An RNA of 207 nucleotides, treated with 2A3 and read out base by base. For 2A3, 492 sequencing reads were counted. 2A3 adducts were read by reverse transcription with SuperScript II with manganese. Values cover nucleotides 27 to 156. Conditions: 150 mM KOAc, 10 mM MgCl2 and 150 mM bicine (pH 8.5), 24 C.
RNA sequence: GGGAACGACUCGAGUAGAGUCGAAAACAAUCAACAAUAUGGUUUGUGUAGUUAUUCUGAAAAUCGUUGAGGUUGUAUGGAAUAGGUUAACCGUAAGACCUUAAGUUGAAAAACUUUAAAAUUAAUCAAAAUCAUGUACACUUCGGUGUACAUGAAAUCACGGUUAGUGGUUCGCCACUAACCGUGAAAAAGAAACAACAACAACAAC
Reactivity to 2A3 in 0.01 (KOAc 150mM, MgCl2 10mM, bicine 150mM(pH8.5), 24C), signal-to-noise 1, nucleotides 027 to 156: c000a000a070u110c000a030a080c010a020a090u050a090u180g060g000u070u050u030g010u040g100u040a150g070u000u070a060u060u010c060u050g060a050a000a000a050u050c080g000u050u070g050a090g100g030u010u030g020u000a190u130g040g000a070a100u000a050g000g000u000u070a110a010c060c010g000u070a150a000g000a040c000c000u020u010a010a050g010u010u020g060a120a000a000a000a000c010u240u150u250a040a100a160a150u190u300a010a100u150c000a050a110a000a230u060c000a000u000g000u000a000c000a000c010u000u000c120g030g000u000g000u020a000c000a000u000g000a000a000a000